An RNA of 177 nucleotides, treated with 2A3 and DMS and read out base by base. DMS adducts were read by reverse transcription with MarathonRT. For 2A3 the reverse transcriptase was SuperScript II with manganese.
RNA sequence: GGGAACGACUCGAGUAGAGUCGAAAACAACACUUGUGCCCACUUUAAUCAUCAUCACCCGAUGAGGUAGCCAAGCAGAGCGACUUAACGCGGGCCUUUACUUCCUAUUCUACACCCUAAUAGGAUCCUGAUUGAGCUAUUUCGAUAGCUCAAUCAGAAAAGAAACAACAACAACAAC
Reactivity to 2A3 in 0.01 (KOAc 150mM, MgCl2 10mM, bicine 150mM(pH8.5), 24C), signal-to-noise 1, nucleotides 027 to 126: c030a000a000c020a020c070u080u040g070u120g060c010c020c000a050c040u060u040u140a180a090u020c020a010u000c010a000u020c030a080c030c060c050g090a070u080g000a000g080g000u010a030g080c010c030a080a000g070c040a030g150a060g170c010g070a100c050u120u130a100a010c020g030c050g040g070g000c000c040u060u220u100a080c010u120u030c010c000u000a050u040u000c040u130a060c010a090c040c000c020u000a100a050u000a030g070g020a030u020c000
Reactivity to DMS in 0.01 (KOAc 150mM, MgCl2 10mM, bicine 150mM(pH8.5), 24C), signal-to-noise 1, nucleotides 027 to 126: c110a090a120c180a110c120u000u000g050u000g020c020c020c010a080c100u020u010u020a080a160u000c040a030u000c000a050u000c090a100c240c050c080g000a020u000g000a050g030g010u000a100g020c010c050a100a200g000c110a040g000a120g000c020g010a050c080u010u010a020a060c150g010c020g050g020g060c040c030u010u010u010a090c130u000u000c000c000u000a050u000u060c120u020a100c160a100c050c030c070u010a040a120u000a020g000g000a030u030c230